RNA sequence: GGGAACGACUCGAGUAGAGUCGAAAAUUAGGUAAGAUGUAACUGUUUGUUGGAAACACCAUAUCAUGAAAUAUUGGCAUAAGAGAACACUCACCGAGCACAACAACUCACCAGUCAUCAAUGCCACCGGGUAUAGUUAGUUCGCUAACUAUACCCGAAAAGAAACAACAACAACAAC
Reactivity to DMS in 0.01 (KOAc 150mM, MgCl2 10mM, bicine 150mM(pH8.5), 24C), signal-to-noise 3, nucleotides 027 to 126: u020u000a070g010g020u000a110a160g010a040u010g010u010a060a080c060u020g020u000u030u010g020u010u010g000g000a150a070a100c170a080c010c040a040u010a050u000c040a080u010g020a100a080a080u000a060u000u010g010g020c060a060u010a070a070g020a150g000a080a040c100a030c060u010c030a080c050c080g000a050g000c050a050c060a030a120c080a040a040c050u000c030a050c080c020a030g000u000c030a000u000c020a030a090u000g000c020c020a130c200
Reactivity to 2A3 in 0.01 (KOAc 150mM, MgCl2 10mM, bicine 150mM(pH8.5), 24C), signal-to-noise 2, nucleotides 027 to 126: u100u070a020g000g040u030a040a080g010a060u050g060u100a050a010c030u000g070u150u030u010g060u010u050g020g040a070a090a010c060a030c000c010a000u050a020u140c100a110u100g130a070a130a010u150a030u070u120g010g000c000a050u030a210a040g050a020g010a160a020c060a020c050u050c010a050c040c110g020a000g020c030a000c000a040a080c010a000a040c010u030c040a050c020c000a010g080u030c000a020u010c000a040a080u190g030c000c000a010c000
An RNA of 177 nucleotides, treated with DMS and 2A3 and read out base by base. Conditions: 150 mM KOAc, 10 mM MgCl2 and 150 mM bicine (pH 8.5), 24 C. For 2A3 the reverse transcriptase was SuperScript II with manganese. The 2A3 profile rests on 1,542 reads. The data come from the RNA Mapping Database (RMDB), library OK2TRN.